[RMDB]
RNA sequence: GGGAACGACUCGAGUAGAGUCGAAAAGAAUCGAGAAAUAGGUUUGAUUGUCCAUCUUUUUGAUAUAUAUCAGGCAUUGCAUUCUCCGGAUAAUUCAAAUCGAAGCAAUUGGAUGUCCAACUCGGGCCUGGACGAGGCUAUUCGUAGCCUCGUCCAGAAAAGAAACAACAACAACAAC
Reactivity to 2A3 in 0.01 (KOAc 150mM, MgCl2 10mM, bicine 150mM(pH8.5), 24C), signal-to-noise 2, nucleotides 027 to 126: g100a070a040u130c060g000a000g070a110a070a000u260a090g010g000u020u050u080g010a020u000u000g020u000c050c040a080u000c080u060u100u130u040u040g110a060u060a020u000a010u000a040u260c060a000g020g070c020a080u000u170g020c000a050u050u090c110u040c010c010g010g000a020u020a100a050u190u030c080a030a000a000u090c020g060a020a000g040c050a020a110u050u060g060g000a000u030g080u160c020c000a000a090c040u000c050g000g000g060c000